[RMDB]
RNA sequence: GGGAACGACUCGAGUAGAGUCGAAAAGAGACAGGAGACAUCAAUCGGUACAUGUAAGAAGUACAUUGGUUCGGUCAGGAAAGGUGGGACAACUUGAAGCAAAGACAGGAAGACUCCAAGCGGGAAGUGGGCUUCCAAAUCACAGGUAGGCAAGAGACGGAUAACACGAGUUCGCUCGUGUUAUCCGAAAAGAAACAACAACAACAAC
Reactivity to 2A3 in 0.01 (KOAc 150mM, MgCl2 10mM, bicine 150mM(pH8.5), 24C), signal-to-noise 1, nucleotides 027 to 156: g040a000g000a000c000a040g020g060a020g060a040c020a020u040c030a030a050u050c070g030g000u000a000c000a030u130g000u070a090a070g010a090a010g120u020a020c000a030u020u070g030g000u090u030c030g000g060u040c010a030g060g010a000a080a000g000g000u020g000g030g010a000c020a010a040c060u040u110g070a040a000g060c010a060a000a000g020a040c020a000g010g010a030a010g000a040c040u000c040c020a050a000g050c080g060g020g010a040a050g010u100g000g000g010c000u000u000c010c000a000a000a070u100c080a000c000a000g020g030u060a010g020g040c020a020a050g020a000g000a030